[RMDB]
RNA sequence: GGGAACGACUCGAGUAGAGUCGAAAAGGUGUGUGUCGGGAACGGGAAUUGUGUAUUUCUAGCACACGCGCCGAUCGGCGAAAGGAUAGCUGAGCUGCUACAAGCGUUGUUAACGAUUAACUACGGAGUUUUGCGAUAGUUUCGACUAUCGCAAAACAAAAGAAACAACAACAACAAC
Reactivity to 2A3 in 0.01 (KOAc 150mM, MgCl2 10mM, bicine 150mM(pH8.5), 24C), signal-to-noise 2, nucleotides 027 to 126: g080g000u060g000u010g000u040g080u110c070g010g010g000a040a060c130g050g040g150a160a040u170u110g130u080g010u170a120u040u050u060c060u090a080g000c090a000c030a010c020g040c020g000c010c000g050a100u140c070g000g000c030g090a240a200a000g100g000a010u070a040g040c000u010g040a000g020c010u030g000c010u040a010c010a100a010g010c110g070u010u000g010u000u120a110a080c030g010a150u030u170a070a100c080u090a070c050g020g020a030
Reactivity to DMS in 0.01 (KOAc 150mM, MgCl2 10mM, bicine 150mM(pH8.5), 24C), signal-to-noise 1, nucleotides 027 to 126: g000g060u030g000u020g040u000g000u040c000g000g020g010a090a120c100g020g000g000a070a060u000u020g040u070g000u030a030u030u030u000c020u000a140g000c090a100c030a010c000g000c040g020c020c000g000a170u020c000g030g010c070g000a060a130a090g030g000a180u010a020g010c080u000g000a140g000c000u000g000c000u000a000c070a050a100g000c020g000u000u020g010u020u000a030a130c070g000a050u020u000a060a100c030u000a140c020g010g000a290
This 177-nucleotide RNA was probed chemically with 2A3 and DMS. It was measured as part of the RMDB library OK1LIB. The DMS profile rests on 1,691 reads. The 2A3 profile rests on 482 reads.